[RMDB]
RNA sequence: GGGAACGACUCGAGUAGAGUCGAAAAUUCAUCAAUGGGAUUGUCUACAUGCCAUUUACAUGAAAUUAUUAGCAGUAUAGAUAUUGCCAAUAUUAGUUUACUCAUUUGUAAACACCUCCUUGUAGUGCGGUUUUCAGUUAUUCGUAACUGAAAACCGAAAAGAAACAACAACAACAAC
Reactivity to 2A3 in 0.01 (KOAc 150mM, MgCl2 10mM, bicine 150mM(pH8.5), 24C), signal-to-noise 1, nucleotides 027 to 126: u080u030c010a060u000c010a000a030u000g010g040g020a060u050u110g160u100c040u090a040c010a020u010g070c000c000a000u010u030u070a090c010a020u090g010a030a100a050u130u050a000u000u020a020g000c020a000g040u010a030u120a180g240a160u090a040u100u060g000c030c020a050a010u020a080u070u100a070g000u000u000u040a040c030u040c110a230u110u110u190g010u020a000a000a020c010a090c010c010u070c010c030u020u070g080u070a070g040u040g100
Reactivity to DMS in 0.01 (KOAc 150mM, MgCl2 10mM, bicine 150mM(pH8.5), 24C), signal-to-noise 1, nucleotides 027 to 126: u000u000c010a020u000c090a060a020u000g010g000g020a030u000u010g040u010c040u010a030c060a100u010g010c000c010a020u000u010u020a100c270a050u000g000a010a030a020u010u000a010u000u000a060g010c020a020g040u030a080u010a190g020a090u000a020u000u010g000c010c060a000a010u000a020u000u000a140g010u010u000u000a010c010u020c300a130u010u010u000g020u000a010a000a000c000a190c090c060u000c060c010u000u000g010u010a020g020u000g020
This 177-nucleotide RNA was probed chemically with 2A3 and DMS. For DMS the reverse transcriptase was MarathonRT. Reactivities are given for positions 27 through 126. The data come from the RNA Mapping Database (RMDB), library OK2TST.